[RMDB]
RNA sequence: GGGAACGACUCGAGUAGAGUCGAAAACUUUUGAAAGCCUGCCCCCUACAUUGCCGACAGGGACACGUGCCGAUCCGAAGGCCAAAGCCAAAGCUGCUGAUUUUUCAUUAUUGGCCAGGCGCAUCCACUAUAGAGCAUACUUCGGUAUGCUCUAUAGAAAAGAAACAACAACAACAAC
Reactivity to 2A3 in 0.01 (KOAc 150mM, MgCl2 10mM, bicine 150mM(pH8.5), 24C), signal-to-noise 2, nucleotides 027 to 126: c000u050u130u100u280g160a120a080a000g020c010c020u020g040c030c010c010c020c030u050a020c000a180u030u160g030c010c020g060a040c010a050g000g010g030a020c030a010c060g050u050g000c000c000g010a030u000c010c020g050a030a020g050g000c000c010a020a010a010g050c010c000a160a020a020g020c030u060g000c000u000g060a090u010u070u080u000u040c010a030u000u220a060u130u030g020g020c000c000a020g000g010c010g010c020a030u030c000c000a050
Reactivity to DMS in 0.01 (KOAc 150mM, MgCl2 10mM, bicine 150mM(pH8.5), 24C), signal-to-noise 6, nucleotides 027 to 126: c050u010u010u010u010g010a110a120a140g010c020c020u000g000c040c010c020c020c020u020a060c140a100u000u010g010c040c030g010a100c150a130g010g000g000a060c080a050c130g000u000g020c040c030g010a100u000c040c050g020a100a110g010g010c020c070a040a070a140g020c030c050a030a070a120g000c110u010g020c100u000g000a070u010u010u010u010u010c060a060u010u000a120u000u010g000g020c020c030a120g010g010c020g010c100a070u000c040c060a200
This 177-nucleotide RNA was probed chemically with 2A3 and DMS. For DMS, 5,549 sequencing reads were counted. The RNA was probed in 150 mM KOAc, 10 mM MgCl2 and 150 mM bicine (pH 8.5) at 24 C.